[RMDB]
RNA sequence: GGGAACGACUCGAGUAGAGUCGAAAAGAUAUGGAGCCCAUGACAGCUUGGAUUUAUCGGAAACGAUUGUCAGCUGCAUGAGGCUCCUAAGUCAAAAUCAAAUCCAUGCUUCGGCAUGGAUUUGAAAGUACUUUUCAUAGUUCGCUAUGAAAAGUACAAAAGAAACAACAACAACAAC
Reactivity to DMS in 0.01 (KOAc 150mM, MgCl2 10mM, bicine 150mM(pH8.5), 24C), signal-to-noise 5, nucleotides 027 to 126: g000a040u000a300u010g000g000a010g020c000c010c000a020u000g000a150c010a010g010c000u000u010g010g010a030u010u010u000a000u000c000g010g000a110a090a190c000g010a010u000u000g010u000c010a030g010c000u000g010c000a010u000g000a170g020g010c000u000c000c000u000a000a080g010u000c040a090a100a100a160u000c000a010a000a000u000c000c000a000u000g010c000u000u020c260g020g010c010a010u000g000g010a000u000u000u000g000a010a040a120
Reactivity to 2A3 in 0.01 (KOAc 150mM, MgCl2 10mM, bicine 150mM(pH8.5), 24C), signal-to-noise 5, nucleotides 027 to 126: g030a000u060a030u140g000g000a000g010c000c010c000a000u010g100a160c010a010g050c050u160u270g170g010a090u300u300u170a020u060c010g020g010a070a040a050c000g010a010u010u010g020u000c000a010g000c010u000g000c000a000u010g050a240g020g000c000u000c000c000u000a000a000g000u000c010a000a000a010a220u030c000a000a000a010u000c000c000a000u000g000c010u060u100c300g150g000c000a000u000g000g000a000u000u000u000g000a000a010a000

An RNA of 177 nucleotides, treated with DMS and 2A3 and read out base by base. For DMS, 8,176 sequencing reads were counted. Source: RMDB library TTRDEL, as collected in RNAgym. Conditions: 150 mM KOAc, 10 mM MgCl2 and 150 mM bicine (pH 8.5), 24 C.